RNA sequence: GGGAACGACUCGAGUAGAGUCGAAAACGGCAGCUUUUGUGAGUGUGUCACGCACUUGUGGCAUAAUUUACUGCCAAUGCCACGCCAAAUAAACCAAGCAGCCAGCACUCACACUCGUGCACAAACAUCGUAGCAGUACUUUCGAGUACUGCUACGAAAAAGAAACAACAACAACAAC
Reactivity to 2A3 in 0.01 (KOAc 150mM, MgCl2 10mM, bicine 150mM(pH8.5), 24C), signal-to-noise 7, nucleotides 027 to 126: c040g030g000c010a020g060c040u020u100u190u150g050u030g020a040g010u020g010u010g070u140c070a020c120g050c020a070c070u110u180g010u000g020g010c010a010u040a080a100u170u160u180a130c060u090g030c000c000a000a010u030g000c000c000a020c030g040c020c040a060a130a170u220a090a100a030c100c050a060a020g000c010a010g020c040c030a010g010c000a000c010u020c010a020c000a010c020u040c030g140u060g050c060a030c040a100a190a030c040a140
Reactivity to DMS in 0.01 (KOAc 150mM, MgCl2 10mM, bicine 150mM(pH8.5), 24C), signal-to-noise 2, nucleotides 027 to 126: c080g010g000c010a000g010c080u000u000u000u000g000u010g000a010g020u000g000u000g000u040c180a170c250g000c070a080c070u050u050g030u000g000g000c000a000u000a040a040u030u010u030a100c060u000g020c060c060a060a040u010g000c000c010a020c050g050c230c170a030a020a110u000a050a090a000c150c170a030a110g000c040a080g010c010c200a190g000c040a040c000u010c000a050c040a050c050u000c070g000u000g000c030a030c140a120a070a090c250a060
Structure probing data (2A3 and DMS) for a 177-nucleotide construct. It was measured as part of the RMDB library OK1LIB. Values are in units of 0.01, from 0 to 300, in steps of 10. DMS adducts were read by reverse transcription with MarathonRT.